[RMDB]
RNA sequence: GGGAACGACUCGAGUAGAGUCGAAAAACCCUAGAGGUCAGCCUUGCGGACCAACAGGAGGACUCCCAGCUUUCCCUUUUCAAGAGGUCCCCAGACACCGGCCACCCUCUUCCAGCCCCUGCGGCCACCUAAGGCGUUCUUUCGAGAACGCCUUAGGAAAAGAAACAACAACAACAAC
Reactivity to 2A3 in 0.01 (KOAc 150mM, MgCl2 10mM, bicine 150mM(pH8.5), 24C), signal-to-noise 2, nucleotides 027 to 126: a010c050c010c000u050a090g070a020g090g000u000c020a020g040c070c140u160u230g050c090g010g020a020c020c000a060a050c010a040g070g020a040g040g040a050c030u010c000c000c010a030g000c010u030u080u030c000c010c020u060u070u100u120c070a090a020g000a040g030g070u040c000c010c010c010a020g030a030c030a010c030c020g030g070c000c020a020c020c020c010u030c000u040u010c010c020a040g000c010c000c000c020u020g040c050g070g000c000c010a020
Reactivity to DMS in 0.01 (KOAc 150mM, MgCl2 10mM, bicine 150mM(pH8.5), 24C), signal-to-noise 1, nucleotides 027 to 126: a070c060c000c010u050a050g020a300g050g000u060c010a060g010c010c060u000u070g000c070g000g010a060c000c010a090a160c250a090g000g000a000g060g000a120c030u040c000c000c000a060g000c050u000u000u010c040c010c000u010u000u000u000c050a090a140g050a100g000g010u020c030c000c070c040a050g010a090c060a160c080c030g000g000c180c050a110c060c060c030u000c050u000u000c090c020a140g010c050c050c010c050u000g010c120g000g000c040c120a070
The data come from the RNA Mapping Database (RMDB), library RFM100. Structure probing data (2A3 and DMS) for a 177-nucleotide construct. DMS adducts were read by reverse transcription with MarathonRT. The DMS profile rests on 1,067 reads. The 2A3 profile rests on 958 reads. For 2A3 the reverse transcriptase was SuperScript II with manganese.